Record summary:
The record gives the reactivity of an RNA of 177 nucleotides to 2A3 and DMS. 2A3 is a SHAPE reagent: it acylates the 2'-hydroxyl of flexible nucleotides of all four kinds. DMS adducts were read by reverse transcription with MarathonRT. The DMS profile rests on 1,223 reads. The data come from the RNA Mapping Database (RMDB), library OK1LIB.
RNA sequence: GGGAACGACUCGAGUAGAGUCGAAAACGACUUGUUGAUCAAAGACGGCAGGCUGGCCCCGGACUUCGACGACGAGGUGAUUGCCCAGUCGUGUGUCACCCGCGGGAAGGACUCCUAGAUGUACAACCCGUUGCCUACUAUUCGUAGUAGGCAACGGAAAAGAAACAACAACAACAAC
Reactivity to 2A3 in 0.01 (KOAc 150mM, MgCl2 10mM, bicine 150mM(pH8.5), 24C), signal-to-noise 2, nucleotides 027 to 126: c050g050a050c050u080u140g070u150u070g040a170u070c070a030a000a160g110a020c000g040g000c000a050g000g060c000u030g130g010c010c030c000c000g030g000a080c030u020u000c040g130a120c010g030a040c020g000a190g020g000u030g020a210u170u200g080c010c000c010a020g040u030c000g010u070g000u010g010u040c060a000c000c000c000g050c040g000g000g010a190a000g020g020a080c010u030c000c050u000a000g000a280u080g050u000a040c000a030a030c020
Reactivity to DMS in 0.01 (KOAc 150mM, MgCl2 10mM, bicine 150mM(pH8.5), 24C), signal-to-noise 1, nucleotides 027 to 126: c130g010a180c120u000u000g000u010u010g000a240u010c110a110a240a110g000a090c050g000g000c010a010g000g000c000u000g010g050c040c000c000c030g000g000a210c000u030u000c060g010a060c060g000a060c040g030a000g030g000u000g000a070u000u070g060c000c010c080a170g000u050c010g030u000g000u000g000u000c000a050c060c000c000g000c050g030g000g020a070a060g000g010a100c040u000c010c000u060a140g000a140u010g000u020a000c140a070a020c160